[RMDB]
RNA sequence: GGGAACGACUCGAGUAGAGUCGAAAAGAUAUGGAGACCCGAGCUUUUGACGAGUGUCGGAAACGACAUUUCGAUAAGCUCAGGGUCUCCUAAGUCAAAUCUUAUUCAGGUUCGCCUGAAUAAGAAACAGAACACAGUACUUCGGUACUGUGUUCUGAAAAGAAACAACAACAACAAC
Reactivity to DMS in 0.01 (KOAc 150mM, MgCl2 10mM, bicine 150mM(pH8.5), 24C), signal-to-noise 1, nucleotides 027 to 126: g000a000u010a290u000g000g000a000g000a010c010c000c000g000a010g000c020u000u010u000u000g010a300c300g000a020g030u000g030u000c000g010g010a080a090a240c010g010a010c000a000u000u000u000c000g010a150u000a000a010g020c000u000c000a080g070g000g000u000c000u000c000c000u000a000a040g000u010c030a050a100a120u010c000u010u000a000u000u000c000a020g000g020u010u000c180g020c000c000u000g010a000a000u000a000a000g000a020a070a160
Reactivity to 2A3 in 0.01 (KOAc 150mM, MgCl2 10mM, bicine 150mM(pH8.5), 24C), signal-to-noise 1, nucleotides 027 to 126: g010a030u060a020u130g000g000a000g000a000c000c020c010g010a000g000c000u180u300u270u280g020a050c020g000a010g020u010g000u000c000g040g000a040a090a000c010g020a000c000a020u180u220u040c020g010a000u030a120a000g000c010u010c000a000g060g000g000u020c000u000c000c000u000a010a000g000u020c050a090a060a030u000c000u000u000a000u000u020c010a000g000g090u020u070c140g140c030c010u020g010a020a000u010a020a000g000a000a010a000